[RMDB]
RNA sequence: GGGAACGACUCGAGUAGAGUCGAAAAAGUUUUUGUGAUAUGGACCGAGAGUCUAGCACGAAGACAGUCGAUCGGAAACGAUCGAUCGAGUGCUAGGACUCGUUUGACGUCCUAAGUCUUACGGCAACUAAGCGAAAUCGUUCGCGAUUUCGCUUAGAAAAGAAACAACAACAACAAC
Reactivity to DMS in 0.01 (KOAc 150mM, MgCl2 10mM, bicine 150mM(pH8.5), 24C), signal-to-noise 2, nucleotides 027 to 126: a090g020u010u010u010u010u000g020u010g000a050u010a160u010g000g010a010c010c110g050a190g000a020g000u010c000u000a010g010c000a010c000g000a040a110g000a020c300a050g000u000c010g000a000u000c000g010g000a060a020a060c000g010a010u000c010g000a010u000c000g000a050g020u000g010c020u000a040g000g010a010c000u010c000g010u000u010u000g010a130c300g010u000c000c000u000a000a100g000u000c000u010u020a080c100g000g000c170a060a150
This 177-nucleotide RNA was probed chemically with DMS. For DMS, 1,549 sequencing reads were counted. Source: RMDB library TTRDEL, as collected in RNAgym. For DMS the reverse transcriptase was MarathonRT. The RNA was probed in 150 mM KOAc, 10 mM MgCl2 and 150 mM bicine (pH 8.5) at 24 C.